[RMDB]
RNA sequence: GGGAACGACUCGAGUAGAGUCGAAAAUAGCGAGUAUCCCUACAGAUGGGAACGAAGCCGAAACUGUAGUGUUAUUAGAGCAAUGGUUAGCAGAUUCUUUGGACCAAACCAUACAGCGCACAAAUGAGCCGAUAUAUGACUUCGGUCAUAUAUCGGCAAAAGAAACAACAACAACAAC
Reactivity to DMS in 0.01 (KOAc 150mM, MgCl2 10mM, bicine 150mM(pH8.5), 24C), signal-to-noise 1, nucleotides 027 to 126: u040a080g000c000g010a150g000u000a060u020c000c000c000u000a060c170a100g000a030u040g020g020g000a080a070c130g050a080a280g040c100c040g000a060a180a160c020u000g100u000a000g000u000g000u000u000a110u030u040a050g000a140g000c050a050a070u040g010g000u000u030a250g020c200a180g000a080u000u020c150u040u000u000g000g000a140c010c090a000a000a120c000c050a060u000a050c140a050g000c020g000c130a000c150a000a040a000u040g000a160
Reactivity to 2A3 in 0.01 (KOAc 150mM, MgCl2 10mM, bicine 150mM(pH8.5), 24C), signal-to-noise 2, nucleotides 027 to 126: u090a010g000c000g050a000g100u060a240u080c000c000c130u040a040c050a020g300a120u170g100g000g020a000a210c000g100a100a000g010c150c000g070a180a020a020c000u000g000u030a000g000u060g000u070u050a140u130u090a080g000a000g030c030a120a180u110g030g000u000u110a030g090c000a000g030a090u190u050c060u000u130u150g030g030a020c040c000a100a110a000c000c030a080u180a100c140a030g050c100g140c110a000c000a010a170a160u280g000a030

An RNA of 177 nucleotides, treated with DMS and 2A3 and read out base by base. For 2A3 the reverse transcriptase was SuperScript II with manganese. The DMS profile rests on 1,129 reads. Conditions: 150 mM KOAc, 10 mM MgCl2 and 150 mM bicine (pH 8.5), 24 C.